RNA sequence: GGGAACGACUCGAGUAGAGUCGAAAAAGUGCCAGCUGAAGAACCUGGGCUUCGAGAAGAUCUUCAUGUACCUGCGUGACAGCCAGUGCUCAGGCUUCGCCGAGAGGGGCAACCGCGACUGGAUAUCCUCUGUUAGGUUUUUCGAAACCUAACAGAGAAAAGAAACAACAACAACAAC
Reactivity to DMS in 0.01 (KOAc 150mM, MgCl2 10mM, bicine 150mM(pH8.5), 24C), signal-to-noise 4, nucleotides 027 to 126: a070g010u010g010c000c010a080g020c080u000g010a080a070g010a060a090c060c030u000g020g000g010c020u000u000c080g000a110g010a120a100g010a090u000c050u010u000c050a050u000g000u010a100c110c070u000g000c050g010u010g000a070c170a080g010c110c050a100g020u010g000c010u000c030a090g000g000c030u010u000c100g010c010c030g000a080g010a130g010g000g010g000c040a040a070c090c040g000c070g000a080c060u000g000g000a100u000a080u000c090
Reactivity to 2A3 in 0.01 (KOAc 150mM, MgCl2 10mM, bicine 150mM(pH8.5), 24C), signal-to-noise 3, nucleotides 027 to 126: a000g130u110g020c020c010a010g030c040u100g040a050a020g030a130a100c000c040u020g000g060g000c030u100u100c090g150a130g020a120a040g050a090u050c020u020u050c050a050u080g010u060a140c040c030u090g030c020g040u050g050a030c050a010g040c030c030a060g030u050g070c000u010c040a020g010g040c000u070u070c050g000c020c030g070a090g000a020g110g040g000g030c010a010a020c030c020g040c010g070a090c040u040g050g010a050u060a050u150c010